[RMDB]
RNA sequence: GGGAACGACUCGAGUAGAGUCGAAAAUCAUGUUUAUUCGUAAACAUGAAACGCCGCACGGCGCGCCUGGCCACCUGGGAACGUGGAUAUGGAAGCCUGAGAAUGAGGUGCCGUUCGCGGCACCUAACCUGAUUCAAUGUUUCGACAUUGAAUCAGGAAAAGAAACAACAACAACAAC
Reactivity to DMS in 0.01 (KOAc 150mM, MgCl2 10mM, bicine 150mM(pH8.5), 24C), signal-to-noise 2, nucleotides 027 to 126: u010c000a000u000g010u000u000u000a010u020u020c120g010u000a000a000a000c010a010u000g020a010a140a180c150g020c030c030g020c170a070c150g010g020c010g020c150g000c020c030u000g000g000c020c030a030c030c030u000g010g010g020a100a050c170g010u010g000g000a050u000a070u000g010g010a080a150g020c010c020u000g010a100g000a100a100u000g010a030g000g030u000g010c000c000g020u000u010c170g010c000g020g010c010a000c000c020u000a060a060
Reactivity to 2A3 in 0.01 (KOAc 150mM, MgCl2 10mM, bicine 150mM(pH8.5), 24C), signal-to-noise 2, nucleotides 027 to 126: u020c010a000u010g010u010u030u010a050u010u050c140g030u020a000a010a000c000a000u010g050a090a030a000c060g020c050c000g120c060a050c080g020g000c020g030c040g010c020c020u010g050g000c000c010a040c000c030u060g050g050g070a080a000c020g020u020g010g030a080u030a060u170g050g010a080a000g010c020c030u080g040a070g070a120a120u200g050a030g000g000u000g000c020c010g020u030u050c200g000c000g070g000c000a000c000c000u010a010a020